[RMDB]
RNA sequence: GGGAACGACUCGAGUAGAGUCGAAAACUGCGUUACGGCGCUUUGGUAGAUAUUGGCUACGGUCGAGAAAUUGCGACUGAUGCCAUCUUAGCUACAUACCCCCGGCUGACAUGGUAAGGAUAGCCCCCUCGCAUGAAGCCUUCGGGCUUCAUGCGAGAAAAGAAACAACAACAACAAC
Reactivity to 2A3 in 0.01 (KOAc 150mM, MgCl2 10mM, bicine 150mM(pH8.5), 24C), signal-to-noise 2, nucleotides 027 to 126: c060u050g000c050g060u080u080a160c300g010g000c000g030c030u000u170u200g130g000u050a000g010a040u060a060u130u000g000g000c010u010a030c030g000g000u000c000g020a000g010a140a300a070u300u300g040c070g000a000c000u040g000a100u090g000c000c000a060u000c000u000u030a000g030c020u040a020c050a070u100a110c000c000c000c000c050g010g000c000u130g030a160c000a090u020g060g020u140a180a030g000g000a000u000a070g090c000c000c010c010
Reactivity to DMS in 0.01 (KOAc 150mM, MgCl2 10mM, bicine 150mM(pH8.5), 24C), signal-to-noise 1, nucleotides 027 to 126: c010u000g000c000g020u000u000a070c060g010g000c020g030c050u020u000u020g010g010u000a000g010a020u000a080u000u000g000g000c010u010a300c300g000g000u100c000g010a100g000a000a210a160u070u030g030c030g000a030c010u000g020a210u060g000c010c000a010u010c050u020u000a080g020c000u000a030c030a040u060a300c020c000c060c040c090g000g090c030u000g000a150c040a040u000g000g060u000a010a210g000g000a240u000a140g010c000c030c010c000